[RMDB]
RNA sequence: GGGAACGACUCGAGUAGAGUCGAAAACAAACUAACUUCGGUUAGUUUGAAAGAACGCUGGAACGCGCAGAGCUCUCGCGAGAGCGCGAAUGCACAAAGAAAAAAGAUAAUCGUUCGCGAUUAUCAACAGUGCAUAAUGCUUCGGCAUUAUGCACUGAAAAGAAACAACAACAACAAC
Reactivity to 2A3 in 0.01 (KOAc 150mM, MgCl2 10mM, bicine 150mM(pH8.5), 24C), signal-to-noise 1, nucleotides 027 to 126: c010a000a000a000c000u010a000a000c000u000u040c060g050g030u000u000a000g010u010u010u040g030a020a010a000g070a140a020c030g000c060u070g010g210a110a000c060g000c010g030c040a010g050a020g100c020u030c040u050c100g020c070g020a020g010a010g040c000g000c030g090a050a060u100g050c020a030c010a100a250a100g200a070a190a040a000a020a000g010a000u010a010a010u000c000g000u040u060c160g060c000g070a000u010u020a010u070c000a050a030
Reactivity to DMS in 0.01 (KOAc 150mM, MgCl2 10mM, bicine 150mM(pH8.5), 24C), signal-to-noise 2, nucleotides 027 to 126: c010a010a000a000c000u010a000a000c000u000u000c280g030g020u000u010a000g010u000u000u010g000a070a170a140g000a170a080c090g000c020u000g010g040a030a110c190g000c010g010c020a010g010a300g000c010u000c000u000c040g010c190g000a170g010a060g000c080g000c030g000a100a100u000g010c000a060c090a040a080a200g020a010a010a030a100a160a060g000a000u000a010a010u010c000g050u000u000c270g010c020g010a010u000u000a030u000c000a090a140

Description
Conditions: 150 mM KOAc, 10 mM MgCl2 and 150 mM bicine (pH 8.5), 24 C. Structure probing data (2A3 and DMS) for a 177-nucleotide construct. For 2A3 the reverse transcriptase was SuperScript II with manganese.